The data come from the RNA Mapping Database (RMDB), library RFMREP. An RNA of 177 nucleotides, treated with 2A3 and DMS and read out base by base. The 2A3 profile rests on 2,356 reads.
RNA sequence: GGGAACGACUCGAGUAGAGUCGAAAAGACACGCCUGAAUGGCAGCAGCAGGCCUUAGCGGCAAUGGACAGCAGGCACAGGACCAGCUUUGCCUCGAGCCGCAACGCUGAUGCCAGAAAAGGACAACCAUGCCUUGAUAGUUCGCUAUCAAGGCAUGAAAAGAAACAACAACAACAAC
Reactivity to 2A3 in 0.01 (KOAc 150mM, MgCl2 10mM, bicine 150mM(pH8.5), 24C), signal-to-noise 2, nucleotides 027 to 126: g060a020c010a010c180g060c010c020u030g110a130a060u020g020g000c000a000g020c010a000g000c010a020g040g100c010c050u110u160a040g000c000g000g000c010a030a100u130g070g060a010c020a020g020c030a000g040g010c060a050c100a180g110g110a130c030c000a000g050c020u050u070u120g010c000c020u030c050g020a060g000c010c000g000c000a020a000c070g000c000u000g000a020u020g020c020c000a000g020a010a190a000a000g000g000a020c020a030a010c030
Reactivity to DMS in 0.01 (KOAc 150mM, MgCl2 10mM, bicine 150mM(pH8.5), 24C), signal-to-noise 2, nucleotides 027 to 126: g010a220c110a130c260g000c010c000u000g000a210a200u000g000g000c000a010g030c010a040g000c030a090g030g000c130c090u010u030a100g010c010g010g000c000a060a080u000g000g000a100c170a090g000c040a010g040g030c010a130c210a150g000g010a170c030c010a080g000c000u010u070u000g010c030c030u000c110g010a300g040c000c010g010c050a070a060c100g010c000u000g010a040u000g000c000c020a010g000a040a050a200a010g010g000a060c070a060a090c130
For DMS, 926 sequencing reads were counted. The reactions ran in a buffer of 150 mM KOAc, 10 mM MgCl2 and 150 mM bicine (pH 8.5), at 24 C.